[RMDB]
RNA sequence: GGGAACGACUCGAGUAGAGUCGAAAAGAUAUGGACGUGACACCGGCUCGAGGAUCUCGGAAACGAGGGAGAGCGUGUACGUCCUAAGUCAAAGGCAUAACUAGUAGUUCGCUACUAGUUAUGCCAACUACCCAGGAUCGUUCGCGAUCCUGGGUAGAAAAGAAACAACAACAACAAC
Reactivity to DMS in 0.01 (KOAc 150mM, MgCl2 10mM, bicine 150mM(pH8.5), 24C), signal-to-noise 2, nucleotides 027 to 126: g010a050u000a300u020g000g000a000c020g060u000g000a030c010a010c080c300g000g050c010u000c000g000a070g020g030a020u000c000u000c000g010g020a120a110a140c020g010a040g020g000g000a010g000a000g010c000g020u010g000u000a040c010g000u010c000c000u040a000a110g000u000c020a070a080a120g010g020c000a000u000a010a010c010u000a000g000u000a010g000u010u000c140g040c000u020a010c010u030a020g000u000u000a000u000g000c000c020a000a050
Reactivity to 2A3 in 0.01 (KOAc 150mM, MgCl2 10mM, bicine 150mM(pH8.5), 24C), signal-to-noise 2, nucleotides 027 to 126: g000a020u080a090u140g000g010a000c020g060u240g190a060c050a040c140c250g300g000c000u000c000g060a250g000g000a010u000c000u000c000g020g040a090a050a030c020g020a000g020g000g000a000g010a000g000c050g020u000g020u010a020c000g000u040c000c000u020a120a010g030u000c060a080a070a130g000g010c020a000u010a000a010c000u000a010g000u020a000g010u050u110c300g040c140u000a000c010u000a000g010u000u010a000u000g000c020c010a010a020